An RNA of 207 nucleotides, treated with 2A3 and read out base by base. It was measured as part of the RMDB library OK3TST. The 2A3 profile rests on 758 reads. 2A3 is a SHAPE reagent: it acylates the 2'-hydroxyl of flexible nucleotides of all four kinds. The RNA was probed in 150 mM KOAc, 10 mM MgCl2 and 150 mM bicine (pH 8.5) at 24 C.
RNA sequence: GGGAACGACUCGAGUAGAGUCGAAAAGUUAGCACAGGGUUCCCAAACUCCAGGGAUCAGGGAAGCCUUCCUCUAGGCAGCAGGAGUGGAAGUUAAGAAAAAGAAGGAAAGAGGGGCAUGUAGGGAAGAAGUGCUCCCUCCACAGCCAGCCUCCUGGAUGACGCGCAUAAUUCGUUAUGCGCGUCAUAAAAGAAACAACAACAACAAC
Reactivity to 2A3 in 0.01 (KOAc 150mM, MgCl2 10mM, bicine 150mM(pH8.5), 24C), signal-to-noise 1, nucleotides 027 to 156: g030u050u030a000g040c030a030c050a120g080g060g050u000u030c030c010c050a030a020a010c040u070c010c000a000g030g040g030a110u180c080a010g020g000g120a090a010g050c000c000u040u040c040c010u060c080u070a070g060g000c060a050g030c010a010g000g060a040g020u060g000g060a070a040g040u100u180a030a080g090a060a080a020a000a010g030a020a060g000g060a000a130a000g000a010g000g000g000g000c010a020u060g010u170a030g160g000g010a020a050g030a090a000g060u000g010c000u080c000c000c010u000c000c000a030c000a000g050c030c020a020g010c010c030u000c000c010u020g010g000